[RMDB]
RNA sequence: GGGAACGACUCGAGUAGAGUCGAAAAGCCGCGGCAAGUGGAGUUAGCGAGAAGAGACUAGGCUUUGGUUUCUUCAAGUGAAGCUGUCACCAAUCAGGUGUGGUAGUUACCGUAAAAAAUCCGGAUUAAUGCCUCAGCGCGUUCGCGCGCUGAGGAACGUUCUAAAGGACUUCGGUCCUUUAGAACGAAAAGAAACAACAACAACAAC
Reactivity to 2A3 in 0.01 (KOAc 150mM, MgCl2 10mM, bicine 150mM(pH8.5), 24C), signal-to-noise 1, nucleotides 027 to 156: g000c010c010g020c020g000g020c070a050a110g020u050g020g040a070g020u300u100a030g040c030g000a080g000a050a010g040a000g000a000c000u030a030g060g210c050u110u100u070g070g010u030u040u010c030u020u010c030a040a020g010u030g030a070a030g000c010u010g130u180c020a010c010c020a020a080u130c060a030g100g080u050g010u000g130g020u030a060g000u130u120a050c000c000g040u070a040a260a000a000a000a130u020c030c030g020g040a040u100u150a140a040u250g040c010c000u000c000a000g000c050g060c000g020u010u040c120g010c000g080c000g000c090u000g000a000g000g000a000a000
Structure probing data (2A3) for a 207-nucleotide construct. High 2A3 reactivity points to a flexible backbone, as in loops and unpaired stretches. Conditions: 150 mM KOAc, 10 mM MgCl2 and 150 mM bicine (pH 8.5), 24 C. For 2A3, 459 sequencing reads were counted.